[RMDB]
RNA sequence: GGGAACGACUCGAGUAGAGUCGAAAAAAUCCCAGUAUCGCGCACCACGAUUGACCUGCGGUUUCAUCCACAAAAUCUGGGCUGCGUGAACUAAAUGUGAACUGACUCGGUGCAACCACCGAAAGGUCAUAGCUGUAGACUUCGGUCUACAGCUAUGAAAAGAAACAACAACAACAAC
Reactivity to DMS in 0.01 (KOAc 150mM, MgCl2 10mM, bicine 150mM(pH8.5), 24C), signal-to-noise 4, nucleotides 027 to 126: a020a050u000c000c000c010a040g000u010a040u000c050g010c010g020c000a070c010c010a050c170g010a000u000u000g020a170c280c180u010g010c040g000g010u010u010u020c280a050u020c030c000a110c020a050a110a000a030u000c010u010g010g000g000c240u020g000c000g030u000g000a010a050c000u010a090a100a100u060g000u010g010a100a080c050u000g040a120c160u010c000g020g020u000g020c180a160a290c300c010a020c000c000g030a000a050a190g040g000u000
Reactivity to 2A3 in 0.01 (KOAc 150mM, MgCl2 10mM, bicine 150mM(pH8.5), 24C), signal-to-noise 8, nucleotides 027 to 126: a000a010u060c040c000c000a020g010u120a170u020c000g000c000g000c010a010c000c000a040c090g020a010u000u040g110a090c050c060u080g030c060g030g010u080u250u180c130a160u080c010c010a020c010a010a140a000a000u000c020u040g020g050g050c170u040g000c010g000u010g010a000a000c010u040a060a080a120u250g090u050g100a070a050c020u030g050a020c010u000c010g020g010u020g040c100a100a160c120c020a020c000c000g000a030a010a010g060g020u010